[RMDB]
RNA sequence: GGGAACGACUCGAGUAGAGUCGAAAAGCAUCACUGUUCGCAGUGAUGCAAAGGUACAAAAACAUGCAAAAGGACAAAAGUCCAUAGUACCAAAGCAUGAAAAAAUCCCUACCUUCGGGUAGGGAAACAUCUACAUUGUCUUCGGACAAUGUAGAUGAAAAGAAACAACAACAACAAC
Reactivity to DMS in 0.01 (KOAc 150mM, MgCl2 10mM, bicine 150mM(pH8.5), 24C), signal-to-noise 3, nucleotides 027 to 126: g010c000a000u000c010a010c000u010g010u000u020c200g060c000a000g020u000g020a020u000g010c010a020a050a040g030g010u000a020c100a050a060a070a080a140c030a020u000g000c020a080a070a140a170g000g000a030c010a100a090a090a140g010u000c000c000a060u000a130g000u000a040c020c030a060a110a110g010c040a040u000g010a000a010a050a070a060a120u000c000c000c000u000a010c010c000u000u010c190g030g000g040u000a020g000g000g010a000a020a020